[RMDB]
This 177-nucleotide RNA was probed chemically with DMS and 2A3.
RNA sequence: GGGAACGACUCGAGUAGAGUCGAAAAAUUGGCUCGGUGAUGUCCGCCCCGUCACUGUUGAACCGGAACUUGACCAGGUGUGCCGAUGCAACGGCGGUGUCUGCCUUCGCUGUGAUGGUGUACAUCGGCAUACAGAGCGGUUCGCCGCUCUGUAUGCAAAAGAAACAACAACAACAAC
Reactivity to DMS in 0.01 (KOAc 150mM, MgCl2 10mM, bicine 150mM(pH8.5), 24C), signal-to-noise 2, nucleotides 027 to 126: a100u010u000g010g010c040u000c040g000g030u010g000a040u010g010u030c030c030g000c150c020c160c020g010u000c010a050c040u000g020u000u000g010a100a060c030c000g000g000a070a060c100u010u000g000a130c070c030a130g000g010u010g020u000g010c000c010g020a070u000g010c090a060a060c050g010g030c030g020g000u010g010u010c050u010g010c040c030u010u000c050g020c100u000g010u000g010a060u000g010g010u010g010u000a050c030a020u000c020g010
Reactivity to 2A3 in 0.01 (KOAc 150mM, MgCl2 10mM, bicine 150mM(pH8.5), 24C), signal-to-noise 1, nucleotides 027 to 126: a000u110u050g060g040c010u010c120g090g000u120g020a060u080g080u000c030c000g050c030c000c000c000g020u010c040a010c020u070g070u200u150g040a060a070c030c000g040g000a060a080c020u080u130g040a070c020c020a040g040g020u010g020u100g050c000c010g050a030u010g020c020a010a080c030g060g000c020g000g020u040g010u000c070u050g040c000c030u050u090c020g050c110u080g010u040g070a100u010g020g000u000g030u030a030c010a020u050c040g060
The data come from the RNA Mapping Database (RMDB), library OK2TRN. Reactivities are given for positions 27 through 126.